[RMDB]
RNA sequence: GGGAACGACUCGAGUAGAGUCGAAAAUGGAGAAGCCAGUAGUUAACGUAGACGUAGACCCGCAGAGUCCGUUUGUCGUGCAACUGCAAAAGAGCUUCCCGCAAUUUGAGGUAGUAGCACAGCAGGUUCCCCCAUUAAUAUUCGUAUUAAUGGGGGAAAAAGAAACAACAACAACAAC
Reactivity to 2A3 in 0.01 (KOAc 150mM, MgCl2 10mM, bicine 150mM(pH8.5), 24C), signal-to-noise 4, nucleotides 027 to 126: u150g010g010a220g020a070a010g010c010c030a010g020u020a010g000u010u010a020a010c010g000u010a010g010a010c000g010u030a040g010a010c020c020c040g100c150a040g030a020g070u000c000c000g010u000u000u010g190u150c010g000u010g040c050a010a000c000u000g000c020a050a040a080a070g060a020g000c000u000u000c000c000c000g000c030a090a150u090u060u210g060a070g020g030u070a030g000u040a010g050c040a030c040a080g030c030a020g060g020u010
Reactivity to DMS in 0.01 (KOAc 150mM, MgCl2 10mM, bicine 150mM(pH8.5), 24C), signal-to-noise 7, nucleotides 027 to 126: u030g010g010a100g020a010a020g010c010c020a200g010u010a020g020u000u010a090a020c010g000u000a020g010a020c000g010u020a100g000a020c010c030c120g010c250a150g010a240g000u010c010c010g010u000u000u000g000u020c000g020u000g000c160a020a010c000u010g000c000a050a050a070a110g010a140g000c010u000u000c010c010c010g020c150a030a020u010u020u000g010a090g010g010u010a040g010u010a050g010c070a070c070a060g000c110a090g010g010u010

An RNA of 177 nucleotides, treated with 2A3 and DMS and read out base by base. DMS (dimethyl sulfate) methylates the pairing face of unpaired adenines and cytosines. DMS adducts were read by reverse transcription with MarathonRT. Conditions: 150 mM KOAc, 10 mM MgCl2 and 150 mM bicine (pH 8.5), 24 C. 2A3 adducts were read by reverse transcription with SuperScript II with manganese.